[RMDB]
The record gives the reactivity of an RNA of 177 nucleotides to DMS and 2A3. DMS adducts were read by reverse transcription with MarathonRT. It was measured as part of the RMDB library M2PK50. Conditions: 150 mM KOAc, 10 mM MgCl2 and 150 mM bicine (pH 8.5), 24 C.

RNA sequence: GGGAACGACUCGAGUAGAGUCGAAAAACCAUCCUAUUCGUAGGAUGGUGCACCAUUGCCGAUUGUAUAUAAUACCGCAGGCGGAUAAGCGGUUCAAAUAAGGAACUUGUCAGUUCGCUGACAAGAACAAUGCUGUAGGUUUCGACCUACAGCAUUGAAAAGAAACAACAACAACAAC
Reactivity to DMS in 0.01 (KOAc 150mM, MgCl2 10mM, bicine 150mM(pH8.5), 24C), signal-to-noise 5, nucleotides 027 to 126: a030c000c000a000u000c000c010u000a030u000u020c170g030u000a010g010g000a010u000g000g010u010g000c110a210c010c010a160u010u010g010c030c020g010a150u010u000g020u000a080u000a060u000a110a090u010a040c000c030g010c020a120g010g020c060g030g000a090u000a050a100g010c010g000g000u000u000c180a040a080a070u030a080a110g010g020a110a170c010u000u000g000u000c000a000g010u010u010c180g020c000u000g000a020c010a000a010g010a080a170
Reactivity to 2A3 in 0.01 (KOAc 150mM, MgCl2 10mM, bicine 150mM(pH8.5), 24C), signal-to-noise 3, nucleotides 027 to 126: a000c000c000a000u000c020c010u010a020u050u060c230g060u030a000g010g000a000u000g000g000u030g040c030a030c040c000a060u050u190g050c020c010g110a110u090u100g130u070a090u010a010u020a280a250u080a050c030c000g000c030a050g130g040c110g000g020a110u110a110a040g000c020g010g000u060u100c030a050a030a110u160a100a100g100g010a060a080c000u000u020g000u010c000a010g010u030u110c200g000c070u010g000a000c010a000a000g000a000a010